Record summary
Conditions: 150 mM KOAc, 10 mM MgCl2 and 150 mM bicine (pH 8.5), 24 C. Structure probing data (2A3 and DMS) for a 177-nucleotide construct. As a SHAPE reagent, 2A3 marks flexible, mostly unpaired nucleotides at the ribose 2'-OH. 2A3 adducts were read by reverse transcription with SuperScript II with manganese. DMS adducts were read by reverse transcription with MarathonRT. The 2A3 profile rests on 5,423 reads.
RNA sequence: GGGAACGACUCGAGUAGAGUCGAAAAGUAUCGGACUAUGACGCGCUGGUGGCUGCUAUCGACGAUACCGGAAUUGUUUUCGAUACCGUCGUCAACAAUGCCGGCAUUUCUCCGAAACAUAAUGGCACGACGUAAUGCUAUUCGUAGCAUUACGUCGAAAAGAAACAACAACAACAAC
Reactivity to 2A3 in 0.01 (KOAc 150mM, MgCl2 10mM, bicine 150mM(pH8.5), 24C), signal-to-noise 4, nucleotides 027 to 126: g030u030a060u060c010g020g010a010c050u050a060u210g030a030c030g040c020g000c040u030g020g030u030g060g010c040u040g000c010u040a020u100c010g000a010c010g020a020u000a040c010c020g010g070a050a020u140u110g140u080u070u010u050c010g000a010u040a090c030c080g030u020c030g010u010c020a000a030c000a010a040u090g010c000c000g010g000c020a020u030u020u000c040u000c000c000g030a030a010a030c040a030u220a140a100u170g130g000c080a010
Reactivity to DMS in 0.01 (KOAc 150mM, MgCl2 10mM, bicine 150mM(pH8.5), 24C), signal-to-noise 3, nucleotides 027 to 126: g020u000a060u000c020g020g010a110c160u000a050u030g020a080c160g010c110g010c010u000g000g010u000g020g030c060u000g010c090u000a090u010c030g000a030c050g020a040u000a020c000c000g000g010a040a050u000u010g010u000u000u000u010c010g000a010u000a070c090c050g010u000c000g010u000c100a010a010c010a040a050u010g010c010c000g000g020c030a040u000u010u010c050u010c030c020g000a070a050a040c130a080u010a070a090u010g020g010c170a180